An RNA of 177 nucleotides, treated with 2A3 and DMS and read out base by base. 2A3 adducts were read by reverse transcription with SuperScript II with manganese. The reactions ran in a buffer of 150 mM KOAc, 10 mM MgCl2 and 150 mM bicine (pH 8.5), at 24 C. Reactivities are rounded to 0.1 and cut off at 0 and 3.
[RMDB]
RNA sequence: GGGAACGACUCGAGUAGAGUCGAAAACAAGAGAGAAUUACACUUCGGUUAAGGUGAUGUUUUGCGGCAGACGAGAUUUCGGCAGCGUAGCGUUAAAAUCUUCAACGCUGUGAUGACCUACCGGAACGCAUACUAUCCCUUUCGAGGGAUAGUAUGCAAAAGAAACAACAACAACAAC
Reactivity to 2A3 in 0.01 (KOAc 150mM, MgCl2 10mM, bicine 150mM(pH8.5), 24C), signal-to-noise 3, nucleotides 027 to 126: c050a050a040g080a020g020a010g070a160a090u190u120a100c080a020c120u060u050c020g020g030u080u130a090a020g020g060u030g050a090u140g140u100u140u070u090g050c030g010g000c000a020g000a030c030g000a020g000a040u020u040u040c040g040g000c010a030g030c100g150u140a020g000c010g010u000u030a080a060a030a060u040c010u120u070c050a020a010c000g000c000u000g010u020g030a050u040g030a020c010c000u020a060c000c010g020g010a060a000c040
Reactivity to DMS in 0.01 (KOAc 150mM, MgCl2 10mM, bicine 150mM(pH8.5), 24C), signal-to-noise 2, nucleotides 027 to 126: c070a100a080g000a100g010a160g000a130a100u010u000a150c150a100c090u000u000c010g030g020u000u000a050a030g010g030u000g030a170u000g000u000u010u000u000g010c090g010g010c030a020g000a300c290g020a080g000a080u000u000u010c020g010g010c000a040g010c100g040u000a060g030c060g010u000u010a060a040a030a040u010c130u010u000c080a060a140c060g010c030u000g000u000g000a040u000g000a080c010c000u000a080c010c000g020g000a030a060c180